[RMDB]
RNA sequence: GGGAACGACUCGAGUAGAGUCGAAAAGAUAUGGAUUGCGACCCUCUCUAUUGGAUCAAUGAUGAGAUCACUCGGUCGGAAACGACCGAGUGAUCUUUGAGAUCCAUAGAGAGCGCAAUCCUAAGUCGGAUAUAUCUUACUUCGGUAAGAUAUAUCCAAAAGAAACAACAACAACAAC
Reactivity to DMS in 0.01 (KOAc 150mM, MgCl2 10mM, bicine 150mM(pH8.5), 24C), signal-to-noise 3, nucleotides 027 to 126: g000a130u010a300u010g010g000a000u000u000g000c010g020a280c160c260c040u000c000u000c010u000a040u010u030g020g000a020u000c010a220a150u020g010a210u000g000a020g020a020u000c010a010c000u020c000g010g010u000c010g030g010a110a070a240c010g010a020c000c000g020a000g030u000g000a010u000c000u000u000u000g000a100g000a010u000c000c000a030u000a020g010a000g000a020g030c010g000c000a000a000u000c000c000u000a010a080g000u010c130
Conditions: 150 mM KOAc, 10 mM MgCl2 and 150 mM bicine (pH 8.5), 24 C. The record gives the reactivity of an RNA of 177 nucleotides to DMS. Values cover nucleotides 27 to 126. For DMS the reverse transcriptase was MarathonRT.